About this RNA
Structure probing data (2A3 and DMS) for a 177-nucleotide construct. 2A3 adducts were read by reverse transcription with SuperScript II with manganese. High 2A3 reactivity points to a flexible backbone, as in loops and unpaired stretches. The RNA was probed in 150 mM KOAc, 10 mM MgCl2 and 150 mM bicine (pH 8.5) at 24 C.
[RMDB]
RNA sequence: GGGAACGACUCGAGUAGAGUCGAAAACUGGGUAGAGUGGCAUCUGGUUGGUAGUGCCUGCCUCAUAUUAGCCAGGGACAAAGCAACGCCUUGUUUAUCCCAGCUUGGCUUUUGGUCUGUGCCUGUGCAAGUUAUAUUUGUUCGCAAAUAUAACUUGAAAAGAAACAACAACAACAAC
Reactivity to 2A3 in 0.01 (KOAc 150mM, MgCl2 10mM, bicine 150mM(pH8.5), 24C), signal-to-noise 4, nucleotides 027 to 126: c020u040g010g020g040u050a060g040a090g100u080g040g020c010a060u010c050u050g100g020u070u080g010g040u050a030g040u010g080c020c010u000g020c020c000u060c030a070u080a090u120u120a010g020c000c010a010g020g000g010a020c040a050a090a010g020c010a030a030c040g020c000c010u020u040g040u050u070u050a080u050c000c000c000a000g010c050u020u020g000g010c000u080u020u040u070g060g020u020c030u030g050u040g050c000c000u060g030u060g050
Reactivity to DMS in 0.01 (KOAc 150mM, MgCl2 10mM, bicine 150mM(pH8.5), 24C), signal-to-noise 9, nucleotides 027 to 126: c050u000g010g010g020u000a050g010a150g030u000g000g010c070a060u010c050u010g000g000u000u000g010g010u000a060g020u010g010c040c020u000g000c070c030u000c080a070u010a080u000u000a080g010c040c010a040g000g000g000a040c050a030a060a070g000c030a030a070c300g010c030c020u000u000g010u000u000u000a150u010c010c010c010a190g010c050u000u000g000g000c020u000u000u000u000g010g000u000c040u000g010u000g000c030c010u000g010u010g020